[RMDB]
RNA sequence: GGGAACGACUCGAGUAGAGUCGAAAAGAUGCGCAUAAACUUGUUUCCAGCCUCAUCAAGACGAUAGGCACACCGCGCCUUGUCUAUGCGGAAAUGGAGGAUGGGCCAGUUUUCCGCGAUAAAUGGAGUGAUGAGUGCAGUUCGCUGCACUCAUCACAAAAGAAACAACAACAACAAC
Reactivity to DMS in 0.01 (KOAc 150mM, MgCl2 10mM, bicine 150mM(pH8.5), 24C), signal-to-noise 1, nucleotides 027 to 126: g010a190u000g000c000g000c070a190u000a050a000a030c020u000u000g010u000u000u000c000c000a000g000c020c020u010c050a100u000c070a130a100g000a150c030g000a060u000a020g010g070c020a060c100a120c140c170g000c130g000c030c070u000u000g030u000c000u000a060u000g010c010g020g000a070a060a050u010g010g010a050g000g000a000u000g000g010g000c200c040a000g000u000u000u000u000c180c050g000c060g000a060u020a130a070a100u010g000g000a300
Reactivity to 2A3 in 0.01 (KOAc 150mM, MgCl2 10mM, bicine 150mM(pH8.5), 24C), signal-to-noise 1, nucleotides 027 to 126: g130a080u260g010c050g060c000a020u150a100a060a020c060u090u050g020u050u190u000c020c020a010g000c000c000u020c020a120u090c030a060a000g040a020c040g100a060u050a040g040g000c010a000c000a010c000c030g100c040g000c000c010u030u030g070u000c020u050a070u200g290c030g030g070a060a050a010u070g070g030a010g000g040a060u070g040g030g000c000c010a000g010u010u010u040u020c060c000g000c030g030a040u070a110a080a040u170g090g000a110
Chemical mapping of a 177-nucleotide RNA with DMS and 2A3. For DMS, 903 sequencing reads were counted. The data come from the RNA Mapping Database (RMDB), library OK2TST.